[RMDB]
RNA sequence: GGGAACGACUCGAGUAGAGUCGAAAAGAGAUCUGUGCAACUGGACCCCAUGAACUGGUUUCCUCUACUGUGAGUUUACCGUAGUGUGCCAUACAAACAUAGUUUCUAUAUGGCUUGAAAAGGGUUUGCAUAUCUGUUUUAAAAGAAGGAAGAGAUAAAAUGCUAAAUCGUUCGCGAUUUAGCAUUUAAAAGAAACAACAACAACAAC
Reactivity to 2A3 in 0.01 (KOAc 150mM, MgCl2 10mM, bicine 150mM(pH8.5), 24C), signal-to-noise 2, nucleotides 027 to 156: g060a010g010a020u040c040u120g020u020g000c030a070a050c070u080g050g090a060c060c000c000c000a040u080g020a040a050c030u060g020g010u010u060u020c030c010u000c020u060a110c040u080g070u100g160a050g050u030u050u090a020c010c020g030u030a050g020u040g050u060g040c000c000a020u040a090c090a020a050a000c020a070u170a060g030u020u060u050c010u020a050u020a030u070g000g040c000u000u070g040a020a020a030a050g000g000g000u010u070u060g010c000a020u020a020u050c010u010g120u030u080u040u090a080a080a000a040g060a020a000g060g010a010a030g010a010g010a040u080a120
Reactivity to DMS in 0.01 (KOAc 150mM, MgCl2 10mM, bicine 150mM(pH8.5), 24C), signal-to-noise 1, nucleotides 027 to 156: g000a070g000a020u000c040u020g050u000g000c020a070a120c130u000g040g020a120c010c000c000c070a130u010g010a090a080c170u010g030g030u000u000u000c050c000u000c020u020a120c140u000g020u030g030a110g000u010u000u010a040c000c060g000u010a090g030u000g000u000g000c000c010a040u010a060c020a030a070a060c040a220u000a070g000u000u010u000c070u010a060u000a030u000g010g010c020u000u010g000a080a040a170a130g000g000g030u000u010u010g030c020a050u000a100u010c030u000g000u000u000u000u000a020a080a050a110g020a140a130g020g000a060a030g010a090g020a150u010a060

Overview: Structure probing data (2A3 and DMS) for a 207-nucleotide construct. 2A3 adducts were read by reverse transcription with SuperScript II with manganese. The RNA was probed in 150 mM KOAc, 10 mM MgCl2 and 150 mM bicine (pH 8.5) at 24 C.